RNA sequence: GGGAACGACUCGAGUAGAGUCGAAAAACAGGAGAUAACUUGCUUAAGACCUGACUGUUUUUAAAAGCGAAUGCCAGUGAGUGAAAUGCCAGCUCCCUGUACAGUUACUAGAGCUCCUGGGAAUGCACGGCAGUGCAGCUUUCGAGCUGCACUGCCGAAAAGAAACAACAACAACAAC
Reactivity to 2A3 in 0.01 (KOAc 150mM, MgCl2 10mM, bicine 150mM(pH8.5), 24C), signal-to-noise 1, nucleotides 027 to 126: a000c000a000g000g000a000g090a090u190a290a110c120u050u050g000c020u150u030a120a000g000a080c000c070u020g000a000c000u000g270u000u000u000u090u240a020a050a080a050g110c020g020a070a040u040g000c010c000a040g000u050g000a000g000u000g170a020a000a250u060g090c020c000a000g000c050u000c040c000c000u020g020u000a000c080a030g020u110u130a120c140u110a020g000a010g050c020u010c000c000u000g000g000g030a130a000u080g000c150a120